[RMDB]
RNA sequence: GGGAACGACUCGAGUAGAGUCGAAAAGUGUCUUUCAACACCCUCCCGUGACCUACGUGUAGGGGUGAAAGGCCCAUCGAACCGGGCAACAGCUGGUUCCAACCGAAACAUGUCGAAGCAUGACCUCCAAAGUCCCUAUCUUCGGAUAGGGACUUUGAAAAGAAACAACAACAACAAC
Reactivity to 2A3 in 0.01 (KOAc 150mM, MgCl2 10mM, bicine 150mM(pH8.5), 24C), signal-to-noise 7, nucleotides 027 to 126: g050u050g020u000c000u010u010u010c050a080a080c040a300c030c000c010u030c030c060c000g010u040g140a300c090c120u190a010c010g030u080g030u190a010g000g000g020g000u000g000a000a000a000g010g000c000c020c020a070u120c040g010a010a010c020c000g030g030g010c090a240a080c020a190g070c030u020g020g010u020u000c030c020a070a060c040c010g070a090a060a040c020a040u040g020u090c110g090a060a010g030c020a030u040g020a080c000c000u040c020
Reactivity to DMS in 0.01 (KOAc 150mM, MgCl2 10mM, bicine 150mM(pH8.5), 24C), signal-to-noise 4, nucleotides 027 to 126: g000u030g000u010c000u000u020u030c000a030a060c040a220c000c020c000u000c110c180c000g000u010g000a150c230c130u070a050c000g020u070g010u010a050g010g020g000g010u000g000a010a020a020g020g000c000c040c040a090u000c150g020a040a030c010c010g000g020g020c070a140a080c300a110g010c010u000g000g000u010u010c000c130a120a120c040c020g000a080a060a190c070a050u010g000u000c100g000a110a100g000c060a010u000g020a180c080c030u010c050